The record gives the reactivity of an RNA of 207 nucleotides to 2A3.
[RMDB]
RNA sequence: GGGAACGACUCGAGUAGAGUCGAAAACGGCGGUGAUCGUCCCGAAGCUCGUCGCGAUCGGUAUCGAACCGGAACUGCUGAACACUCCGCAGAUGGCGACGGCGUCCGGCGGCAUCGUCGACGACAUGCUCGCUGGCACGGUGUCGCACUCGGGACAUAACAAUUUUUGCUUCGGCAAAAAUUGUUAAAAAGAAACAACAACAACAAC
Reactivity to 2A3 in 0.01 (KOAc 150mM, MgCl2 10mM, bicine 150mM(pH8.5), 24C), signal-to-noise 2, nucleotides 027 to 156: c040g040g000c000g040g060u070g010a120u120c060g010u000c020c000c020g020a010a010g070c120u150c260g060u030c000g030c020g030a120u080c030g040g050u170a100u190c150g050a090a060c020c000g000g020a050a060c020u060g000c000u010g050a080a010c100a050c210u030c010c070g010c000a000g040a090u050g050g000c000g010a000c000g030g030c000g000u020c010c010g010g000c000g000g020c000a000u010c140g010u010c010g010a090c070g020a000c000a030u080g020c070u100c170g020c020u010g000g020c180a000c030g050g300u000g000u000c000g020c000a030c020u030c020g030g000g020a010c000a080